[RMDB]
RNA sequence: GGGAACGACUCGAGUAGAGUCGAAAAAAGAUAUGGAGAGAAGAAUCUCUUGGAUUUAUGGUGCAUGGCCACAUCGGAAACGAUGUGGUCAGUGAUGCCAUUGUCAGAGACUUCUCUCCUAAGUCAACGUACAGAGAUGGUUCGCCAUCUCUGUACGAAAAGAAACAACAACAACAAC
Reactivity to DMS in 0.01 (KOAc 150mM, MgCl2 10mM, bicine 150mM(pH8.5), 24C), signal-to-noise 2, nucleotides 027 to 126: a080a050g020a050u020a300u000g000g000a000g010a010g000a000a010g010a170a160u000c000u000c000u000u000g040g030a020u020u010u000a010u000g000g020u030g000c020a140u000g000g000c000c000a020c010a010u000c010g030g000a160a170a120c000g010a010u020g020u000g000g000u000c010a000g010u000g010a210u010g000c000c000a010u000u000g000u020c010a000g010a010g000a050c010u000u000c010u000c000u000c010c000u010a000a060g030u000c030a150a160
Reactivity to 2A3 in 0.01 (KOAc 150mM, MgCl2 10mM, bicine 150mM(pH8.5), 24C), signal-to-noise 2, nucleotides 027 to 126: a020a000g050a020u110a070u180g020g000a030g020a020g020a030a030g040a300a300u030c000u000c020u120u220g180g000a100u210u300u150a020u080g000g030u020g000c030a030u000g040g000c000c000a020c020a000u000c000g060g020a090a040a030c010g000a000u010g030u040g010g000u000c010a000g010u010g020a300u040g000c000c000a000u000u030g000u000c010a010g000a000g020a010c000u010u010c020u060c010u040c000c010u000a010a020g010u000c010a000a130
The record gives the reactivity of an RNA of 177 nucleotides to DMS and 2A3. It was measured as part of the RMDB library TTRDES. Values cover nucleotides 27 to 126. Conditions: 150 mM KOAc, 10 mM MgCl2 and 150 mM bicine (pH 8.5), 24 C.